[RMDB]
RNA sequence: GGGAACGACUCGAGUAGAGUCGAAAAAUAAUCCGCGGUUAGGGGCACACACCCUUCGACCCGCGGGUCUCCGAAUGGGCGAACCCGCCAGGAGAUGUCCUGGCAUCCCCCUUGGGAACUCAUACCUUAUGCAUGUACAAUUCGUUGUACAUGCAUAAAAAGAAACAACAACAACAAC
Reactivity to 2A3 in 0.01 (KOAc 150mM, MgCl2 10mM, bicine 150mM(pH8.5), 24C), signal-to-noise 9, nucleotides 027 to 126: a000u160a010a030u030c000c000g010c000g000g000u020u040a030g010g010g020g020c070a040c010a010c000a040c200c010c000u090u150c050g050a040c020c030c000g000c000g000g000g000u020c040u000c020c010g070a080a060u080g010g000g000c080g040a060a060c030c060c060g000c010c010a010g020g010a090g050a070u210g160u070c000c000u000g010g000c000a050u040c020c010c000c000c000u040u050g050g000g010a040a030c030u060c110a060u150a190c000c020u010
Reactivity to DMS in 0.01 (KOAc 150mM, MgCl2 10mM, bicine 150mM(pH8.5), 24C), signal-to-noise 4, nucleotides 027 to 126: a070u030a100a020u020c000c000g000c000g020g010u000u000a130g000g020g010g030c100a090c220a120c300a190c080c010c000u010u020c050g000a100c300c030c020g010c000g000g000g000u010c080u010c010c030g000a060a040u020g020g010g000c100g010a040a050c110c080c110g020c010c010a010g020g010a060g010a150u010g010u000c010c000u000g000g020c020a080u010c010c010c000c030c040u010u010g000g010g020a080a080c070u010c050a060u010a100c080c060u010